[RMDB]
RNA sequence: GGGAACGACUCGAGUAGAGUCGAAAAACGCAGCGGAGACGCGGCGGACGCUGGACUUCUGCGCGCGCAUGGCUGCAGGUGCGGCGGCCAGCCCGUUCCGGGCAGCCGACAUUGGCCCGCCGGGCAGACUCCACAGUGAUUUCGAUCACUGUGGAGUAAAAGAAACAACAACAACAAC
Reactivity to DMS in 0.01 (KOAc 150mM, MgCl2 10mM, bicine 150mM(pH8.5), 24C), signal-to-noise 2, nucleotides 027 to 126: a060c140g000c000a040g020c010g020g010a130g010a180c010g010c020g030g000c020g000g020a050c110g020c080u000g000g010a150c080u000u000c000u000g010c020g010c020g020c030g000c080a070u010g010g010c010u000g010c010a100g010g040u000g010c040g010g000c010g000g010c020c010a040g000c020c010c000g000u010u020c160c110g050g000g020c020a060g010c000c010g000a060c110a100u010u000g010g010c020c010c030g000c100c010g020g010g000c050a180g000
Reactivity to 2A3 in 0.01 (KOAc 150mM, MgCl2 10mM, bicine 150mM(pH8.5), 24C), signal-to-noise 1, nucleotides 027 to 126: a000c040g000c010a000g040c010g060g100a100g080a110c020g000c000g030g010c000g040g010a030c020g050c090u200g170g000a280c010u070u030c000u100g060c220g000c000g000c000g000c150a090u200g190g000c010u010g000c000a010g090g000u110g050c020g000g000c010g010g000c000c010a010g040c070c000c000g070u270u060c080c060g030g020g010c000a000g040c060c000g020a040c030a120u060u140g030g000c050c010c010g020c040c010g010g010g000c010a040g020

Record summary: Conditions: 150 mM KOAc, 10 mM MgCl2 and 150 mM bicine (pH 8.5), 24 C. An RNA of 177 nucleotides, treated with DMS and 2A3 and read out base by base. It was measured as part of the RMDB library OK2TRN. The 2A3 profile rests on 1,500 reads.